[RMDB]
RNA sequence: GGGAACGACUCGAGUAGAGUCGAAAAGAUAUGGAGUUGUCACUCCGAUAAGUCGGUAUCGGAAACGAUACUCGACUUUUGACGGAGGACAACUCCUAAGUCAAAAGCCGUGUGUUCGCACACGGCAGAAACUUAGUACCUUCGGGUACUAAGUUUCAAAAGAAACAACAACAACAAC
Reactivity to DMS in 0.01 (KOAc 150mM, MgCl2 10mM, bicine 150mM(pH8.5), 24C), signal-to-noise 3, nucleotides 027 to 126: g000a030u000a160u010g010g000a020g010u010u000g010u010c000a200c010u000c000c000g010a100u020a010a010g010u010c000g000g000u010a000u000c000g010g000a030a020a060c000g000a010u000a000c010u010c010g000a010c000u000u000u000u000g020a230c100g010g000a020g000g000a010c000a010a010c000u000c000c010u000a000a060g000u010c010a180a120a190a150g020c000c000g030u000g020u000g010u010u020c290g010c000a020c000a010c000g020g010c000a000
Reactivity to 2A3 in 0.01 (KOAc 150mM, MgCl2 10mM, bicine 150mM(pH8.5), 24C), signal-to-noise 3, nucleotides 027 to 126: g010a010u030a030u070g000g020a020g020u010u000g060u030c070a170c300u020c000c030g020a110u170a210a010g020u000c020g000g000u000a000u020c000g000g020a020a000a020c020g000a000u020a000c040u050c080g010a000c000u030u010u020u130g200a110c010g000g000a000g010g000a000c000a000a010c010u000c010c000u000a000a010g000u030c000a110a040a010a170g000c000c000g000u000g000u010g000u010u160c300g080c120a010c000a000c010g020g010c000a000
This 177-nucleotide RNA was probed chemically with DMS and 2A3. For 2A3, 6,909 sequencing reads were counted. The DMS profile rests on 5,024 reads. The reactions ran in a buffer of 150 mM KOAc, 10 mM MgCl2 and 150 mM bicine (pH 8.5), at 24 C. 2A3 adducts were read by reverse transcription with SuperScript II with manganese. It was measured as part of the RMDB library TTRDES.